[RMDB]
RNA sequence: GGGAACGACUCGAGUAGAGUCGAAAAUACAGCUUGUUCGCAAGCUGUAAAAAAAACCUUUGUGUGUCAGACAUGUCGUGAUGGUGGCCCAUUGGGCCAUCAUCCGACAACAGCUGACACACUCUGGUAAAAACUGAUAUGCUUCGGCAUAUCAGAACAUUGUGACACCGUUCGCGGUGUCACAAUGAAAAGAAACAACAACAACAAC
Reactivity to 2A3 in 0.01 (KOAc 150mM, MgCl2 10mM, bicine 150mM(pH8.5), 24C), signal-to-noise 1, nucleotides 027 to 156: u050a010c000a020g010c000u060u010g070u080u230c270g010c170a000a000g000c000u010g000u000a030a020a020a010a020a020a020a020c020c010u010u000u000g020u020g000u000g000u000c010a000g020a210c050a210u030g000u000c040g170u270g150a010u000g010g020u000g000g040c000c080c070a300u140u300g030g000g000c000c000a000u000c000a000u010c000c010g010a000c000a000a000c000a000g000c000u000g000a000c000a000c000a000c010u000c000u000g020g000u060a190a130a000a000a000c000u000g000a000u000a000u000g010c040u030u100c240g100g010c000a000u000a000u010c000a000g000a020a010